[RMDB]
RNA sequence: GGGAACGACUCGAGUAGAGUCGAAAAAUAAAGAGCGUAAAGGCGUCAUUGAGUGACGUGAAGAUCAUCCAAGUGUGCUGUCUACAGUCGUAGAUAGCGCACAUUACGCUAAGAUGAUCAUAAAAAACUUCCUUAGUAUCUUCGGAUACUAAGGAAGAAAAGAAACAACAACAACAAC
Reactivity to DMS in 0.01 (KOAc 150mM, MgCl2 10mM, bicine 150mM(pH8.5), 24C), signal-to-noise 3, nucleotides 027 to 126: a110u000a060a080a050g010a080g020c000g010u000a040a110a160g020g000c000g000u000c000a060u000u020g000a150g000u000g000a010c000g020u010g010a120a150g000a000u000c000a000u000c000c070a050a140g020u000g000u000g000c000u000g000u010c000u000a000c000a200g010u030c180g010u000a000g000a010u010a010g010c000g010c000a000c000a070u010u000a010c020g010c000u010a070a120g010a010u010g000a010u000c000a130u030a000a040a060a060a070a100
Reactivity to 2A3 in 0.01 (KOAc 150mM, MgCl2 10mM, bicine 150mM(pH8.5), 24C), signal-to-noise 5, nucleotides 027 to 126: a000u270a000a120a000g060a020g000c010g030u030a010a080a070g160g000c000g020u010c010a020u070u300g190a140g280u040g010a010c000g010u040g090a100a030g000a020u010c000a000u000c060c040a120a130g000u020g000u000g020c000u000g000u000c000u000a060c110a260g170u300c180g000u120a000g000a010u000a000g000c000g000c000a000c000a000u000u000a010c000g000c030u020a030a030g000a000u000g020a010u010c040a030u270a000a110a000a000a010a020